[RMDB]
RNA sequence: GGGAACGACUCGAGUAGAGUCGAAAAUGCUCGAUGUCUUUGCCAUCCAAGUGUAGUUGUUCUCCAAAGAGCAAUAUUUGAGAAGGUGUAGUAUUGACUAUUUGUACAUUGGAGACGUUGCGCAGUAGUACCUUAGGUACUUCGGUACCUAAGGUACAAAAGAAACAACAACAACAAC
Reactivity to DMS in 0.01 (KOAc 150mM, MgCl2 10mM, bicine 150mM(pH8.5), 24C), signal-to-noise 4, nucleotides 027 to 126: u000g010c020u000c020g010a030u010g020u010c010u000u000u000g020c010c020a160u020c120c120a070a080g020u010g000u000a050g010u000u010g000u010u000c000u000c070c100a030a030a070g010a240g030c010a020a020u000a030u000u010u000g010a080g000a120a150g010g020u010g020u010a080g000u000a060u010u010g000a050c060u000a030u000u000u010g020u000a080c120a180u000u000g000g000a050g010a050c080g000u010u010g010c080g030c040a070g000u010a170
Reactivity to 2A3 in 0.01 (KOAc 150mM, MgCl2 10mM, bicine 150mM(pH8.5), 24C), signal-to-noise 6, nucleotides 027 to 126: u010g000c020u000c010g040a060u190g020u030c000u040u030u060g160c000c010a030u040c050c040a160a090g030u030g010u070a080g030u060u240g020u080u000c010u000c010c000a060a030a000g120a030g020c000a020a030u020a060u070u060u100g130a130g060a120a060g160g040u260g040u210a050g020u020a050u030u090g060a100c020u040a110u120u090u160g050u020a050c060a120u020u070g010g010a000g010a010c030g000u000u030g000c000g010c030a010g020u060a020
Conditions: 150 mM KOAc, 10 mM MgCl2 and 150 mM bicine (pH 8.5), 24 C. Structure probing data (DMS and 2A3) for a 177-nucleotide construct. It was measured as part of the RMDB library OK2TST. In probing experiments dimethyl sulfate is read out at A N1 and C N3, which are open when not base-paired. 2A3 adducts were read by reverse transcription with SuperScript II with manganese. For DMS the reverse transcriptase was MarathonRT. The DMS profile rests on 4,513 reads.